Chemical mapping of a 177-nucleotide RNA with DMS and 2A3.
The reactions ran in a buffer of 150 mM KOAc, 10 mM MgCl2 and 150 mM bicine (pH 8.5), at 24 C.
DMS adducts were read by reverse transcription with MarathonRT.

RNA sequence: GGGAACGACUCGAGUAGAGUCGAAAACGCAGAAAAACAGCGGAUACGCGACAUCCAGCGUGCAAGACGUGGCUGAAGACACUAAAAUUUGCCAACCUGGCUACAUAAUGCCGCGCAUGUCGCGGCAUGACUAGGGGAGUUUCGACUCCCCUAGUCAAAAAGAAACAACAACAACAAC
Reactivity to DMS in 0.01 (KOAc 150mM, MgCl2 10mM, bicine 150mM(pH8.5), 24C), signal-to-noise 3, nucleotides 027 to 126: c070g010c080a130g030a040a080a060a110a150c120a100g010c050g020g010a150u000a080c070g000c020g000a060c100a080u010c040c020a140g020c030g000u010g020c070a040a070g000a110c200g010u000g010g000c020u010g020a090a090g010a090c050a040c110u000a050a050a060a090u010u010u010g010c040c030a050a100c150c070u020g020g000c050u000a030c140a040u000a130a120u000g000c000c000g020c010g000c190a080u010g000u010c000g010c000g010g010c100a020
Reactivity to 2A3 in 0.01 (KOAc 150mM, MgCl2 10mM, bicine 150mM(pH8.5), 24C), signal-to-noise 1, nucleotides 027 to 126: c030g060c020a070g160a170a200a020a000a040c050a050g020c000g030g010a030u090a110c040g000c010g060a010c020a090u030c000c000a030g000c000g130u120g000c010a040a010g040a040c090g030u020g030g010c010u000g120a100a000g090a000c020a000c060u100a090a000a100a290u080u130u070g000c010c010a010a000c080c040u030g000g000c020u080a010c020a080u190a050a020u100g020c020c000g000c030g040c080a090u160g050u130c020g000c000g030g000c020a050